[RMDB]
RNA sequence: GGGAACGACUCGAGUAGAGUCGAAAAAGCUUCGUGGCAUCCUCAAGCUUCUGCAGCUCCUAAAAGUUCAGAAUGAAGACGUUCAGCGAGCUGUGUGUGGGGCCUUGAGAAACUUAGUAUUUGAAGAGUACUUAGGGUUAUUCGUAACCCUAAGUACAAAAGAAACAACAACAACAAC
Reactivity to DMS in 0.01 (KOAc 150mM, MgCl2 10mM, bicine 150mM(pH8.5), 24C), signal-to-noise 5, nucleotides 027 to 126: a120g010c020u000u000c040g030u000g010g010c110a140u000c100c010u000c020a030a080g010c020u000u000c030u010g000c030a040g000c010u000c010c020u000a020a030a110a070g010u000u000c070a140g020a130a150u010g020a120a140g000a050c030g000u000u000c060a020g020c120g000a030g020c000u000g010u000g010u010g040u010g010g010g000g010c130c080u000u010g010a030g010a070a060a060c050u010u000a080g010u000a110u010u000u000g010a070a110g010a260
Reactivity to 2A3 in 0.01 (KOAc 150mM, MgCl2 10mM, bicine 150mM(pH8.5), 24C), signal-to-noise 5, nucleotides 027 to 126: a000g030c020u050u050c050g050u120g050g010c030a080u090c010c010u000c010a000a020g000c000u020u020c020u150g000c000a000g000c000u000c000c010u060a110a100a050a020g050u090u050c040a050g050a290a300u200g060a180a070g070a030c020g030u040u050c100a010g000c030g090a000g000c010u000g020u010g010u030g020u100g020g000g010g000c010c040u010u010g010a020g000a050a030a010c030u090u100a050g040u080a300u150u120u120g110a110a040g030a020